[RMDB]
RNA sequence: GGGAACGACUCGAGUAGAGUCGAAAAGGCUAAAUUGGGUUAAUGUUAGCAAUUGGAUGCCCGAUACAGCAAGCUCAUUGCAUGACCUCUGACAUUGGCCAUAUUAUUUUAGAGGUGACAAACGUAAGUUGGCAGAUGAAUUCGUUCAUCUGCCAACAAAAGAAACAACAACAACAAC
Reactivity to DMS in 0.01 (KOAc 150mM, MgCl2 10mM, bicine 150mM(pH8.5), 24C), signal-to-noise 3, nucleotides 027 to 126: g020g000c060u000a020a100a080u000u020g020g000g010u000u020a020a020u010g000u000u000a070g020c020a060a030u010u010g010g010a150u000g040c010c010c010g020a160u010a120c140a090g010c070a090a060g000c040u010c120a060u000u020g020c050a180u000g010a050c010c010u000c030u020g030a030c020a050u000u000g000g000c010c020a080u000a110u010u010a070u010u010u010u010a050g020a010g010g030u000g020a110c160a060a080a080c240g000u010a080a090
Reactivity to 2A3 in 0.01 (KOAc 150mM, MgCl2 10mM, bicine 150mM(pH8.5), 24C), signal-to-noise 2, nucleotides 027 to 126: g030g000c080u030a050a180a040u190u210g140g030g030u060u050a030a010u020g010u090u080a030g010c040a020a000u030u070g120g040a050u090g000c030c020c000g000a040u090a160c090a040g030c060a070a000g000c010u010c050a020u000u050g020c010a020u130g050a000c000c000u010c010u040g020a020c010a040u040u070g010g000c000c010a020u060a020u220u010a060u010u080u030u080a010g000a030g040g040u040g060a020c170a230a110a010c080g100u080a000a160